[RMDB]
RNA sequence: GGGAACGACUCGAGUAGAGUCGAAAAAGCGGAUAGGCACCGAUACGUCGGUGCCUAUCCGCAGCAGUUCGCAUCGUCGUCGCAAAAGCAGCGCAGCGGUCGUGAUGGUGGGUGGUGGAGGAAGAAAAACGAUCACAUUAUUCGUAAUGUGAUCGUUAAAAGAAACAACAACAACAAC
Reactivity to DMS in 0.01 (KOAc 150mM, MgCl2 10mM, bicine 150mM(pH8.5), 24C), signal-to-noise 2, nucleotides 027 to 126: a070g010c010g010g020a050u000a020g000g070c030a010c000c030g010a040u000a070c240g010u000c010g050g030u010g010c020c000u000a000u010c010c020g040c020a000g020c100a120g010u000u000c020g020c080a030u010c050g000u000c030g020u020c040g010c040a050a100a130a130g020c120a070g000c050g020c050a100g000c030g010g020u000c060g030u020g000a050u010g000g020u010g010g020g020u000g000g010u010g000g010a120g010g020a110a070g020a090a090a060
Reactivity to 2A3 in 0.01 (KOAc 150mM, MgCl2 10mM, bicine 150mM(pH8.5), 24C), signal-to-noise 2, nucleotides 027 to 126: a000g000c000g000g000a000u000a000g000g020c000a000c000c000g000a010u060a040c290g040u010c000g000g020u000g000c030c000u000a000u020c040c020g000c100a000g010c000a000g010u060u070c010g000c040a010u000c020g090u030c020g030u000c010g000c040a090a170a080a070g080c090a050g000c030g000c050a030g040c030g050g010u100c030g010u030g080a140u130g010g020u060g060g020g060u150g000g010u110g020g030a090g050g010a100a000g060a030a150a010